Source information
Source: RMDB library M2PK50, as collected in RNAgym. The record gives the reactivity of an RNA of 177 nucleotides to 2A3 and DMS. For 2A3 the reverse transcriptase was SuperScript II with manganese.
[RMDB]
RNA sequence: GGGAACGACUCGAGUAGAGUCGAAAAGUCUCUAUCUUCGGAUAGAGACAAAUAUAAGUACCACUUAGAGCUAGAUCAAUUAAUAUCGUCGACAUCGUAAAAAAAGAGGUAUGUUCGCAUACCUCAAUCUCAUAUUCUUGUUCGCAAGAAUAUGAGAAAAAGAAACAACAACAACAAC
Reactivity to 2A3 in 0.01 (KOAc 150mM, MgCl2 10mM, bicine 150mM(pH8.5), 24C), signal-to-noise 4, nucleotides 027 to 126: g000u000c000u000c000u000a000u000c000u020u060c230g140g000a000u000a000g010a000g000a000c000a000a010a000u020a010u000a040a030g030u030a030c000c010a030c040u040u110a040g010a010g090c030u060a030g020a130u040c030a030a060u070u140a100a070u090a060u190c050g050u010c030g040a040c030a080u070c070g110u270a090a130a030a020a000a030a020g000a000g000g000u000a010u000g030u020u060c190g000c070a000u010a000c010c000u010c010a000a000
Reactivity to DMS in 0.01 (KOAc 150mM, MgCl2 10mM, bicine 150mM(pH8.5), 24C), signal-to-noise 4, nucleotides 027 to 126: g010u000c000u000c010u000a010u000c000u000u020c170g010g010a010u000a000g000a000g010a010c000a000a030a050u010a110u010a090a090g000u000a140c010c020a140c130u010u010a100g010a080g020c040u000a050g000a080u000c060a090a090u000u000a050a080u000a050u000c070g010u000c030g010a080c100a070u000c080g000u020a010a000a060a100a070a080a110g010a020g010g010u000a010u000g000u000u000c210g030c010a010u000a010c000c000u000c000a030a040
Conditions: 150 mM KOAc, 10 mM MgCl2 and 150 mM bicine (pH 8.5), 24 C.
The 2A3 profile rests on 5,163 reads.